[RMDB]
RNA sequence: GGGAACGACUCGAGUAGAGUCGAAAAGAAUGCAUGGUGAAAGGGGUUUGCGCCCGUCAAUUCUUCAAUUCGUUAUGUGAUCAGGCUUUGGCGAAUCAGGACUUCCAAAUGGCAGAGCAGCUUGAGAUAGUCAUGAAAAUUUCGAUUUUCAUGACUAAAAAGAAACAACAACAACAAC
Reactivity to 2A3 in 0.01 (KOAc 150mM, MgCl2 10mM, bicine 150mM(pH8.5), 24C), signal-to-noise 4, nucleotides 027 to 126: g060a060a020u090g020c040a020u050g010g000u070g070a080a050a050g060g030g030g010u060u090u090g020c050g010c010c010c010g030u020c000a020a060u060u010c000u080u060c030a050a120u040u020c030g050u100u080a090u140g080u060g040a090u050c030a020g050g020c030u070u090u110g010g010c020g030a010a020u060c030a040g080g000a030c000u060u000c030c000a030a070a100u090g030g000c010a020g010a020g020c030a000g000c000u040u040g010a020g000a070
Reactivity to DMS in 0.01 (KOAc 150mM, MgCl2 10mM, bicine 150mM(pH8.5), 24C), signal-to-noise 9, nucleotides 027 to 126: g010a090a070u000g000c060a040u000g010g010u000g000a040a090a110g010g010g010g010u000u000u010g010c160g010c030c020c020g010u010c060a050a090u010u000c030u000u000c100a070a100u010u000c060g010u000u000a050u000g020u000g000a080u010c090a080g010g010c040u000u000u000g010g020c040g010a060a050u010c090a080g000g000a070c090u000u000c040c040a030a060a080u000g010g000c040a060g000a100g010c070a050g010c040u000u010g010a090g010a160